An RNA of 177 nucleotides, treated with DMS and 2A3 and read out base by base. It was measured as part of the RMDB library M2PK50. For 2A3, 10,237 sequencing reads were counted. High DMS reactivity at an A or C suggests that its Watson-Crick edge is free. For 2A3 the reverse transcriptase was SuperScript II with manganese.
RNA sequence: GGGAACGACUCGAGUAGAGUCGAAAACUCGAAUCUUUCGAGAUUCGAGACUCUCGAAGUGUCAAUAAGAUCGAAAAGAUCGCCGAGCAUAAAAUAGUCACAAUGCUGCUUGAUUCGUCAAGCAGAAUAUUUGAACAAUGUUCGCAUUGUUCAAAUAAAAAGAAACAACAACAACAAC
Reactivity to DMS in 0.01 (KOAc 150mM, MgCl2 10mM, bicine 150mM(pH8.5), 24C), signal-to-noise 8, nucleotides 027 to 126: c010u000c000g010a020a010u000c010u000u000u020c150g010a020g010a020u000u000c000g000a030g010a070c110u000c010u000c010g020a160a120g020u000g010u000c050a090a110u010a090a120g010a010u000c010g000a100a060a120a180g000a010u000c010g010c180c070g010a080g020c300a040u010a050a040a070a080u010a050g010u000c070a040c110a110a100u010g010c000u000g000c000u000u000g000a020u000u010c200g010u000c000a000a010g000c000a010g000a060a060
Reactivity to 2A3 in 0.01 (KOAc 150mM, MgCl2 10mM, bicine 150mM(pH8.5), 24C), signal-to-noise 7, nucleotides 027 to 126: c000u000c000g000a010a010u010c010u030u110u160c210g100a030g000a010u000u000c010g000a010g030a030c010u000c000u000c020g070a270a050g020u010g040u060c030a050a080u120a220a070g010a010u010c010g050a080a120a130a170g000a010u010c000g000c020c010g060a050g000c040a090u140a100a150a090a060u110a100g050u070c030a010c020a100a120u150g010c010u000g000c000u010u010g010a020u020u050c140g050u010c090a000a000g000c000a000g010a000a010